[RMDB]
RNA sequence: GGGAACGACUCGAGUAGAGUCGAAAAGAUAUGGAUGAAGAACUACAACGAUGCUUCAAUGAUGUCGGAAACGAUUGAGAAGCUACCGUUGCUUCAUCCUAAGUCAAAAGGUGUGUUCGCACACCAACAUACUAACCCCGUUCGCGGGGUUAGUAUGAAAAGAAACAACAACAACAAC
Reactivity to 2A3 in 0.01 (KOAc 150mM, MgCl2 10mM, bicine 150mM(pH8.5), 24C), signal-to-noise 4, nucleotides 027 to 126: g030a010u050a010u140g030g000a000u020g000a000a020g000a090a100c160u220a060c300a020a000c010g040a020u080g000c010u020u010c040a100a300u240g090a040u170g040u000c000g040g010a060a070a060c020g000a000u020u090g030a030g000a070a000g020c000u070a070c040c010g000u010u010g040c010u000u000c000a000u000c000c000u000a030a020g050u040c020a000a030a100a120g000g000u020g000u000g030u040u120c280g040c100a000c000a000c000c000a010a000
Reactivity to DMS in 0.01 (KOAc 150mM, MgCl2 10mM, bicine 150mM(pH8.5), 24C), signal-to-noise 3, nucleotides 027 to 126: g000a040u000a300u020g000g030a020u000g010a000a010g000a100a070c100u010a300c010a010a000c010g000a050u000g010c000u000u010c010a110a150u000g000a090u030g000u000c000g010g000a090a060a160c010g000a020u000u000g000a140g010a000a000g000c000u000a040c100c010g020u000u000g000c010u000u000c000a020u000c000c010u010a030a090g010u010c040a080a080a120a060g010g010u000g030u000g010u000u010c210g000c020a020c010a010c000c000a080a120

An RNA of 177 nucleotides, treated with 2A3 and DMS and read out base by base. The data come from the RNA Mapping Database (RMDB), library TTRDEL. The RNA was probed in 150 mM KOAc, 10 mM MgCl2 and 150 mM bicine (pH 8.5) at 24 C. For DMS the reverse transcriptase was MarathonRT. For 2A3 the reverse transcriptase was SuperScript II with manganese. The DMS profile rests on 3,221 reads. Reactivities are given for positions 27 through 126.